Chemical mapping of a 177-nucleotide RNA with 2A3 and DMS.

[RMDB]
RNA sequence: GGGAACGACUCGAGUAGAGUCGAAAAAAAAAGAUAUGGACCCUAAGAGGCUAUGAAGUACAUUAGUCAGUAUAUCGGAAACGAUAUACUGAAUUUGUAUGGAGCCUUAUGGGUCCUAAGUCAAAAAUCAUCUACUGUAGUUCGCUACAGUAGAUGAAAAAGAAACAACAACAACAAC
Reactivity to 2A3 in 0.01 (KOAc 150mM, MgCl2 10mM, bicine 150mM(pH8.5), 24C), signal-to-noise 1, nucleotides 027 to 126: a000a030a000a050a110g010a010u020a010u050g010g000a000c010c030c010u060a240a110g090a010g250g010c010u040a260u300g000a020a010g000u020a000c020a030u070u150a160g220u040c020a000g000u010a000u000a000u010c000g000g000a000a000a000c000g000a010u000a000u000a000c000u000g000a000a030u000u000u000g000u000a000u020g000g000a000g000c000c000u000u040a020u020g010g000g000u000c000c000u000a000a010g000u000c000a090a000a000a090a050
Reactivity to DMS in 0.01 (KOAc 150mM, MgCl2 10mM, bicine 150mM(pH8.5), 24C), signal-to-noise 2, nucleotides 027 to 126: a030a090a080a110a060g010a030u000a030u000g000g000a000c000c000c000u020a150a220g000a020g010g000c000u000a180u030g000a100a160g000u000a000c000a010u000u010a060g030u000c000a010g000u000a000u000a000u000c000g000g010a010a000a020c000g010a010u000a000u000a000c000u000g000a000a010u020u000u000g000u000a000u000g000g010a000g020c000c000u010u000a300u010g000g010g010u000c000c000u000a000a120g000u020c000a070a060a100a090a120